[RMDB]
RNA sequence: GGGAACGACUCGAGUAGAGUCGAAAAGAUAUGGAGCAUACGGUCUUUUGACGACAUUCGGAAACGAAAAUAUUUGUCGAUAAGACCGAUGCUCCUAAGUCAAAAGUUUAACGUUCGCGUUAAACAACAAACUAGCACGGUUCGCCGUGCUAGUUUGAAAAGAAACAACAACAACAAC
Reactivity to 2A3 in 0.01 (KOAc 150mM, MgCl2 10mM, bicine 150mM(pH8.5), 24C), signal-to-noise 1, nucleotides 027 to 126: g050a060u100a030u110g010g020a000g000c040a010u300a130c070g000g000u000c020u090u160u130u140g080a060c000g010a000c030a090u020u010c030g000g070a020a110a060c020g020a030a080a090a010u300a270u080u240u180g000u010c000g050a100u020a300a010g010a000c000c020g000a000u000g000c000u000c000c000u000a020a020g020u000c040a050a030a000a180g000u030u000u000a000a030c010g030u030u060c220g000c000g120u000u000a000a010a010c000a000a000
Reactivity to DMS in 0.01 (KOAc 150mM, MgCl2 10mM, bicine 150mM(pH8.5), 24C), signal-to-noise 1, nucleotides 027 to 126: g000a020u000a300u030g000g030a050g000c010a020u000a140c010g010g000u000c000u000u000u000u010g010a100c040g000a050c300a150u000u010c000g000g000a090a050a190c000g000a010a010a070a160u010a120u000u000u010g010u000c000g030a000u020a000a010g010a010c000c000g000a000u010g010c020u000c000c000u000a040a080g000u000c010a030a100a160a140g010u000u000u000a000a010c010g010u000u000c230g000c020g000u010u000a000a000a000c000a200a150
The data come from the RNA Mapping Database (RMDB), library TTRDEL. This 177-nucleotide RNA was probed chemically with 2A3 and DMS. The 2A3 profile rests on 1,381 reads. DMS adducts were read by reverse transcription with MarathonRT.